Structure probing data (2A3 and DMS) for a 177-nucleotide construct.
For DMS the reverse transcriptase was MarathonRT.
The RNA was probed in 150 mM KOAc, 10 mM MgCl2 and 150 mM bicine (pH 8.5) at 24 C.

[RMDB]
RNA sequence: GGGAACGACUCGAGUAGAGUCGAAAAGCUGGCUGCCGCGACCAUAACACAGAAUACAACAAAGAAGCCAAAGCGACGAGCACGAGUAUCUCGCUGUCUCAGUAUCUUCUGAAAGUAUCUAAUGUGCCAAAGCAGGAGUGUUCGCACUCCUGCUUUGAAAAGAAACAACAACAACAAC
Reactivity to 2A3 in 0.01 (KOAc 150mM, MgCl2 10mM, bicine 150mM(pH8.5), 24C), signal-to-noise 3, nucleotides 027 to 126: g000c000u010g030g000c010u000g000c030c010g080c030g050a080c030c030a090u120a170a050c090a000c000a050g090a060a030u070a040c060a080a010c010a060a240a000g040a050a000g000c030c070a070a040a030g060c030g060a050c030g010a010g000c030a040c100g040a040g050u170a170u170c040u000c000g010c040u030g050u090c010u000c060a010g040u050a110u070c000u040u000c020u070g060a110a120a020g020u020a020u030c020u080a200a050u070g020u060g020c030
Reactivity to DMS in 0.01 (KOAc 150mM, MgCl2 10mM, bicine 150mM(pH8.5), 24C), signal-to-noise 3, nucleotides 027 to 126: g010c010u010g010g010c010u000g000c020c040g050c070g010a140c050c040a110u020a060a100c050a020c060a040g000a120a060u010a030c060a050a110c160a070a140a030g010a040a070g010c160c090a090a080a070g020c040g010a030c090g000a060g010c100a070c110g000a100g010u010a100u010c020u000c000g030c120u000g000u000c030u000c030a080g000u000a100u010c040u020u010c010u000g000a070a070a130g000u000a030u000c030u010a070a090u010g000u000g020c130